[RMDB]
RNA sequence: GGGAACGACUCGAGUAGAGUCGAAAAGCGUACUGGCCGACGAUCGUACGGCCUCUGACGCGUACAGGCGCAGUACGCGCCGUAGCAGCGCGCAUCGUACGAGGCCUACUGGCCGAUCGGCCCGGCCCUGUACGUACCAGUUCGCUGGUACGUACAGAAAAGAAACAACAACAACAAC
Reactivity to 2A3 in 0.01 (KOAc 150mM, MgCl2 10mM, bicine 150mM(pH8.5), 24C), signal-to-noise 3, nucleotides 027 to 126: g070c040g050u110a150c060u050g000g010c000c000g000a020c020g010a050u040c020g010u040a020c150g010g010c000c020u000c000u020g020a010c000g000c010g010u000a020c030a080g000g020c010g000c020a050g170u220a070c150g000c000g000c000c000g020u030a040g030c150a040g000c010g000c000g000c070a140u080c060g040u070a040c160g010a000g000g020c010c000u000a030c040u070g030g000c040c000g020a240u030c000g000g000c000c000c010g000g020c000c000
Reactivity to DMS in 0.01 (KOAc 150mM, MgCl2 10mM, bicine 150mM(pH8.5), 24C), signal-to-noise 5, nucleotides 027 to 126: g000c140g020u020a110c080u010g000g000c010c000g000a030c020g000a030u000c030g020u000a050c200g010g000c010c010u010c010u000g010a080c030g010c010g030u000a080c040a180g000g010c000g000c010a230g020u010a100c210g010c020g000c010c010g010u000a050g010c160a160g000c020g020c020g000c080a090u010c120g010u010a110c160g010a050g000g010c000c000u010a050c060u010g040g000c060c000g020a070u000c030g000g000c040c040c080g010g000c020c030